Source: RMDB library M2RFPK, as collected in RNAgym. Structure probing data (2A3 and DMS) for a 207-nucleotide construct. The reactions ran in a buffer of 150 mM KOAc, 10 mM MgCl2 and 150 mM bicine (pH 8.5), at 24 C.
RNA sequence: GGGAACGACUCGAGUAGAGUCGAAAACGAGUGCAAUAAAGACGCGGUUGCCGAUCGGUAUGGAUGCCACCGUGACGGCUCAAUCACACAAGUGCCAACGAUAACCAGGCGCUCGCUAUUGCUGCGUAAAAGCGACGAUCGUUCGCGAUCGUCGCAACUAGAGUGUAUACUUCGGUAUACACUCUAGAAAAGAAACAACAACAACAAC
Reactivity to 2A3 in 0.01 (KOAc 150mM, MgCl2 10mM, bicine 150mM(pH8.5), 24C), signal-to-noise 7, nucleotides 027 to 156: c040g020a030g060u080g020c020a020a080u080a140a200a020g080a030c040g000c020g020g020u050u090g000c020c030g060a070u040c030g040g060u130a100u170g090g040a090u140g080c040c010a020c020c020g030u040g060a080c040g030g000c010u020c070a040a070u120c020a050c020a020c010a110a080g020u020g040c010c010a080a030c070g070a080u060a110a050c050c030a070g080g000c010g000c020u040c010g010c010u030a040u080u120g030c050u040g020c010g040u060a050a090a060a050g000c000g000a000c000g000a000u000c000g000u050u060c230g000c010g080a000u000c000g000u000c000g000c000a000a000
Reactivity to DMS in 0.01 (KOAc 150mM, MgCl2 10mM, bicine 150mM(pH8.5), 24C), signal-to-noise 3, nucleotides 027 to 156: c030g000a070g040u010g000c040a120a130u000a070a120a130g010a090c040g020c030g010g010u010u000g050c010c020g010a080u000c030g030g020u010a090u010g020g010a130u000g000c070c050a050c020c000g010u010g010a140c120g010g030c020u000c080a090a140u000c040a080c030a070c070a100a160g030u000g010c010c010a050a110c040g020a120u010a070a110c050c030a150g020g020c010g010c020u000c010g000c030u000a090u000u000g020c000u010g030c000g000u000a060a050a100a160g000c010g000a040c000g000a020u000c010g010u000u000c300g030c030g010a020u000c000g000u000c000g050c000a000a030
Overview:
For 2A3 the reverse transcriptase was SuperScript II with manganese.